[RMDB]
RNA sequence: GGGAACGACUCGAGUAGAGUCGAAAAAUAAAGGAGGACCAUUCUCAGUCAAGGGUAUGUGAGUACCUGUUCUCCCCUGCCAGAAUCUCAAACGAGCUCUCUGUAAAAAUCACAAGAUUUUAUUGUGUAUCAGGCAAAUGUUCGCAUUUGCCUGAUAAAAAGAAACAACAACAACAAC
Reactivity to 2A3 in 0.01 (KOAc 150mM, MgCl2 10mM, bicine 150mM(pH8.5), 24C), signal-to-noise 3, nucleotides 027 to 126: a000u190a020a070a000g040g010a030g030g020a010c050c010a050u070u000c030u000c050a050g090u040c070a080a100g050g020g010u060a020u040g150u090g030a040g030u030a040c000c000u010g020u110u000c020u000c000c010c000c000u020g060c020c000a070g000a210a210u080c010u010c020a170a250a040c080g020a020g000c000u000c000u000c030u040g010u070a090a060a030a050a080u080c020a000c040a090a000g030a120u040u080u150u130a110u090u060g020u010g010
Reactivity to DMS in 0.01 (KOAc 150mM, MgCl2 10mM, bicine 150mM(pH8.5), 24C), signal-to-noise 3, nucleotides 027 to 126: a070u010a030a100a090g010g000a060g030g000a060c040c010a130u010u010c030u000c060a220g000u020c160a070a140g010g000g000u000a000u010g000u110g000a130g000u020a010c020c010u000g010u010u010c030u000c020c000c010c020u000g000c050c030a040g000a050a030u010c020u000c040a120a100a110c110g000a050g000c040u010c070u000c000u010g000u020a020a090a050a020a010u000c000a030c040a040a020g010a110u020u020u000u050a070u020u000g000u010g000